[RMDB]
RNA sequence: GGGAACGACUCGAGUAGAGUCGAAAAUAAACAAGUUACGGGCGCUCAUUUAUUCGCAAGUUUGAAUAUCUUGAGAAGUAAGUAGUAAGAUAAAUAAUUCGCCUACUUGUUUGAAAAUGCCUCACCGAACUGUUAUCUUAUUCGUAAGAUAACAGUUAAAAGAAACAACAACAACAAC
Reactivity to 2A3 in 0.01 (KOAc 150mM, MgCl2 10mM, bicine 150mM(pH8.5), 24C), signal-to-noise 6, nucleotides 027 to 126: u080a000a000a000c010a000a000g030u090u210a170c230g060g010g000c030g000c020u020c030a010u010u020u030a020u030u010c000g010c090a100a090g040u070u130u130g060a050a030u060a030u100c020u060u090g010a030g010a060a050g080u130a060a040g020u050a030g060u070a140a060g110a190u190a110a160a020u140a030a100u160u090c010g000c010c000u000a010c000u010u000g010u000u010u020g010a020a040a000a000u060g020c000c010u040c020a070c020c070g020
Reactivity to DMS in 0.01 (KOAc 150mM, MgCl2 10mM, bicine 150mM(pH8.5), 24C), signal-to-noise 5, nucleotides 027 to 126: u010a030a010a030c000a010a040g010u000u040a150c300g000g010g010c010g050c300u010c060a010u000u000u000a010u010u000c010g000c050a060a060g010u010u020u020g000a100a090u020a040u020c020u000u000g000a030g000a040a080g010u000a030a050g020u010a080g010u030a060a090g010a130u010a050a100a090u000a060a110u010u020c030g000c010c000u000a060c000u000u000g000u020u000u000g000a060a030a060a050u000g000c020c020u010c170a090c200c150g000
An RNA of 177 nucleotides, treated with 2A3 and DMS and read out base by base. The RNA was probed in 150 mM KOAc, 10 mM MgCl2 and 150 mM bicine (pH 8.5) at 24 C. Reactivities are given for positions 27 through 126. For 2A3 the reverse transcriptase was SuperScript II with manganese. It was measured as part of the RMDB libraries RFM100 and RFMREP. For DMS the reverse transcriptase was MarathonRT.